Record summary: This 177-nucleotide RNA was probed chemically with DMS and 2A3. The reactions ran in a buffer of 150 mM KOAc, 10 mM MgCl2 and 150 mM bicine (pH 8.5), at 24 C. DMS adducts were read by reverse transcription with MarathonRT. The data come from the RNA Mapping Database (RMDB), library OK2TRN.

[RMDB]
RNA sequence: GGGAACGACUCGAGUAGAGUCGAAAAGGAGUCAAUAGGAAAUCAUGCAGCAUAGUUGCCACCAAGUUUGGUUGUGAUAUGCUCUGCUCAGUGGUAUCUGAACGCGAGAGUGCUGAUUAUAACUCUCCUCGUGUAUGUCGUUCGCGACAUACACGAGAAAAGAAACAACAACAACAAC
Reactivity to DMS in 0.01 (KOAc 150mM, MgCl2 10mM, bicine 150mM(pH8.5), 24C), signal-to-noise 1, nucleotides 027 to 126: g000g000a070g000u000c060a060a080u010a160g020g000a090a100a060u000c040a030u010g040c030a060g000c050a000u000a060g020u020u010g010c000c020a030c010c020a060a210g010u000u010u000g040g000u000u000g010u000g000a060u000a000u000g010c010u000c120u010g000c060u020c080a040g000u000g010g020u000a050u000c010u000g010a030a030c230g030c120g030a070g000a100g020u000g000c090u000g010a020u010u010a160u010a120a080c000u000c020u000c050
Reactivity to 2A3 in 0.01 (KOAc 150mM, MgCl2 10mM, bicine 150mM(pH8.5), 24C), signal-to-noise 2, nucleotides 027 to 126: g070g010a090g040u110c040a060a080u080a230g100g040a120a100a090u050c050a040u220g010c020a010g000c000a040u030a030g260u140u060g000c030c000a010c010c000a120a210g120u130u230u120g090g000u010u020g010u000g010a010u000a030u080g000c060u050c050u070g010c010u000c050a040g040u020g090g030u080a130u080c030u040g050a090a030c060g000c000g010a050g000a000g090u070g000c080u090g030a100u070u130a140u030a120a090c020u010c000u000c030